RNA sequence: GGGAACGACUCGAGUAGAGUCGAAAAGAUUUACGCUCCUCAAUGACACUUACGAAAGCAGAAACAAGCAAAAAUGUGAUAUUUACACUAGAAAAAAGUUCAUUCGGGAUGGUGGUCUGCUUUUCGAUGACACGAUACCUUUCGAGGUAUCGUGUCAAAAAGAAACAACAACAACAAC
Reactivity to 2A3 in 0.01 (KOAc 150mM, MgCl2 10mM, bicine 150mM(pH8.5), 24C), signal-to-noise 2, nucleotides 027 to 126: g000a010u000u040u160a100c200g090c000u030c060c000u000c010a020a000u090g010a020c020a000c180u000u150a060c030g060a180a010a000g020c000a030g000a020a150a000c190a280a020g060c060a010a040a060a100a090u160g000u040g010a000u030a080u100u140u030a140c010a000c060u120a140g300a060a070a000a050a000a030g150u120u020c050a060u000u000c020g190g000g000a180u230g010g060u010g000g020u020c030u020g000c060u000u000u050u180c060g040a050
Reactivity to DMS in 0.01 (KOAc 150mM, MgCl2 10mM, bicine 150mM(pH8.5), 24C), signal-to-noise 2, nucleotides 027 to 126: g010a160u010u060u080a130c010g000c110u030c000c110u000c210a020a020u000g000a060c210a050c060u000u000a120c090g000a030a110a070g010c010a030g010a090a100a100c210a070a140g020c110a000a040a040a100a020u000g010u000g020a040u040a050u070u000u000a160c030a050c090u010a130g020a000a020a000a100a010a040g000u000u000c000a080u050u040c090g010g040g000a060u000g010g040u040g040g010u010c000u000g010c100u000u010u050u010c060g020a140